[RMDB]
RNA sequence: GGGAACGACUCGAGUAGAGUCGAAAAAACAUACAUAUACCUGUAUCUGUCUAUAACCUUGUAUUACCAUGCGUGUUAGAUAGUGUUAGAAGGAAUUAGGACACCAUGGUCUACCGUCGUGAGGUUCGGCGUCGCGUGCUAGAGGUAGCACGGACGUCUCUGUCUGGAAUUUCGAUUCCAGACAGAGAAAAGAAACAACAACAACAAC
Reactivity to 2A3 in 0.01 (KOAc 150mM, MgCl2 10mM, bicine 150mM(pH8.5), 24C), signal-to-noise 6, nucleotides 027 to 156: a010a000c110a030u240a010c090a020u240a020u060a110c030c030u030g040u080a120u060c070u070g140u020c040u110a110u070a120a060c020c000u060u080g070u060a120u120u140a050c020c010a010u000g050c080g140u020g000u050u010a060g030a160u080a080g080u100g080u190u160a070g070a170a050g170g090a060a120u130u060a100g140g030a010c000a010c020c000a010u010g020g010u000c010u050a030c010c030g080u100c020g050u070g040a050g010g000u050u060c040g010g020c000g020u020c040g020c000g060u000g000c000u020a050g020a040g300g240u080a000g020c000a010c000g010g000a000c000g000u000
Reactivity to DMS in 0.01 (KOAc 150mM, MgCl2 10mM, bicine 150mM(pH8.5), 24C), signal-to-noise 1, nucleotides 027 to 156: a010a050c070a070u010a090c030a090u000a190u020a110c070c010u000g030u000a070u000c040u000g060u010c030u000a130u000a100a060c020c020u000u010g000u000a070u000u010a110c040c030a000u000g030c150g030u010g000u000u000a100g000a090u000a040g000u000g060u000u010a090g000a170a080g030g010a070a170u000u000a120g010g010a060c010a040c050c020a080u010g000g010u010c020u000a040c050c030g010u000c060g020u020g010a130g010g010u000u000c090g000g020c010g010u000c010g040c020g020u000g000c000u000a080g020a230g050g000u000a050g000c000a030c000g000g000a000c030g010u000